RNA sequence: GGGAACGACUCGAGUAGAGUCGAAAAUUUAAUGCUGUCGAUCAUCGUGGUGUAACUCAGACAGCGAAACAGGGCUUCAAAUUGUUGCCAGUUACUGACCCACGGCAUCGGGCCAUUAUCAGGAAAGCAUUCGCCAUAUGUUCGCAUAUGGCGAAUGAAAAGAAACAACAACAACAAC
Reactivity to DMS in 0.01 (KOAc 150mM, MgCl2 10mM, bicine 150mM(pH8.5), 24C), signal-to-noise 3, nucleotides 027 to 126: u000u000u000a120a090u000g010c000u010g000u000c010g000a040u020c110a120u010c050g050u010g000g000u000g020u000a070a070c180u010c100a210g010a030c010a020g000c010g010a040a060a110c200a110g000g000g000c050u000u000c120a070a090a170u010u010g010u010u020g000c060c020a090g020u000u000a050c070u000g010a210c210c000c000a030c100g000g000c300a050u020c030g020g020g010c060c030a030u010u010a060u040c140a110g000g000a070a060a080g010
Reactivity to 2A3 in 0.01 (KOAc 150mM, MgCl2 10mM, bicine 150mM(pH8.5), 24C), signal-to-noise 1, nucleotides 027 to 126: u080u010u080a040a000u080g000c020u030g090u110c000g050a030u030c020a010u050c060g070u030g130g000u070g020u150a050a030c040u010c040a050g010a070c010a010g000c000g000a000a010a020c070a060g100g000g000c020u040u060c060a130a180a300u170u200g010u020u010g000c010c000a010g060u080u050a030c010u040g050a050c000c000c000a000c020g000g000c010a000u030c010g010g000g060c040c000a030u040u070a060u120c050a010g070g080a100a000a000g050